[RMDB]
RNA sequence: GGGAACGACUCGAGUAGAGUCGAAAACUCAGAUGCACCCCAAAACAGGUAGGUCUAUGAUGAUCCAGCUGGUGUAUUCCUUUUUGAAAGUGCAGAUGCCAAAUUAGCUUUCAAGACAGCUAUUUUGCACCAUAGCCGAGUUCGCUCGGCUAUGGUGAAAAGAAACAACAACAACAAC
Reactivity to 2A3 in 0.01 (KOAc 150mM, MgCl2 10mM, bicine 150mM(pH8.5), 24C), signal-to-noise 1, nucleotides 027 to 126: c030u030c020a030g020a110u060g020c040a020c000c030c020c010a010a070a030a000c070a030g030g040u110a040g050g020u000c000u130a300u300g120a070u130g010a000u000c010c030a020g080c040u040g050g100u110g010u070a080u030u150c010c050u050u070u030u090u160g140a100a050a000g020u030g000c070a030g050a150u010g010c020c000a000a110a000u040u030a030g000c020u050u100u130c050a060a090g030a060c040a020g000c030u030a060u080u030u040u090g030
Reactivity to DMS in 0.01 (KOAc 150mM, MgCl2 10mM, bicine 150mM(pH8.5), 24C), signal-to-noise 1, nucleotides 027 to 126: c040u000c020a050g060a100u010g010c060a050c030c090c100c020a040a040a070a070c110a020g000g000u000a090g000g020u000c030u000a110u010g000a070u000g030a020u000c030c030a060g020c030u000g020g020u030g060u000a190u010u000c010c010u000u030u000u010u010g030a110a000a020g020u000g000c070a080g020a150u000g000c190c130a010a000a060u020u000a090g000c000u000u000u000c160a100a090g000a110c180a050g000c020u000a010u000u000u000u000g000

Description:
This 177-nucleotide RNA was probed chemically with 2A3 and DMS. In probing experiments dimethyl sulfate is read out at A N1 and C N3, which are open when not base-paired. 2A3 adducts were read by reverse transcription with SuperScript II with manganese. The RNA was probed in 150 mM KOAc, 10 mM MgCl2 and 150 mM bicine (pH 8.5) at 24 C.